Overview:
Chemical mapping of a 177-nucleotide RNA with DMS and 2A3. The reactions ran in a buffer of 150 mM KOAc, 10 mM MgCl2 and 150 mM bicine (pH 8.5), at 24 C. Values cover nucleotides 27 to 126. DMS adducts were read by reverse transcription with MarathonRT. The 2A3 profile rests on 1,393 reads. The data come from the RNA Mapping Database (RMDB), library OK1LIB.
RNA sequence: GGGAACGACUCGAGUAGAGUCGAAAAGAAUUCGUGUUUAGGUAAUCAUAAAGUAGUUUAGUGUUUUUCUUCCAGUGCGAGUAUCUUUCUUGCAAAUCGAUGGGUAUACUGGAGGCUUCAUGAGUUAAUAGUACGGUACUUUCGAGUACCGUACUAUAAAAGAAACAACAACAACAAC
Reactivity to DMS in 0.01 (KOAc 150mM, MgCl2 10mM, bicine 150mM(pH8.5), 24C), signal-to-noise 3, nucleotides 027 to 126: g000a060a060u000u020c040g010u010g020u010u010u000a060g000g000u000a060a050u000c060a060u010a040a050a090g000u030a080g040u000u000u010a090g010u010g010u000u000u000u020u010c010u010u000c020c010a040g000u000g000c080g020a080g000u020a020u030c050u000u000u000c020u000u010g010c170a100a060a070u020c160g010a040u010g000g000g000u010a050u010a030c030u000g000g010a040g000g000c190u000u010c110a040u010g010a060g020u000u000a100
Reactivity to 2A3 in 0.01 (KOAc 150mM, MgCl2 10mM, bicine 150mM(pH8.5), 24C), signal-to-noise 3, nucleotides 027 to 126: g080a000a030u090u080c020g000u020g030u090u080u070a090g000g030u050a030a180u100c070a040u130a150a110a050g070u080a040g030u130u060u080a120g010u060g000u070u040u070u090u050c000u070u000c000c000a000g000u000g050c040g090a040g040u000a080u060c050u050u020u000c010u030u080g030c070a010a100a140u130c080g040a030u120g020g000g090u050a050u050a050c000u020g000g030a010g040g000c020u060u040c090a080u140g060a030g070u040u100a080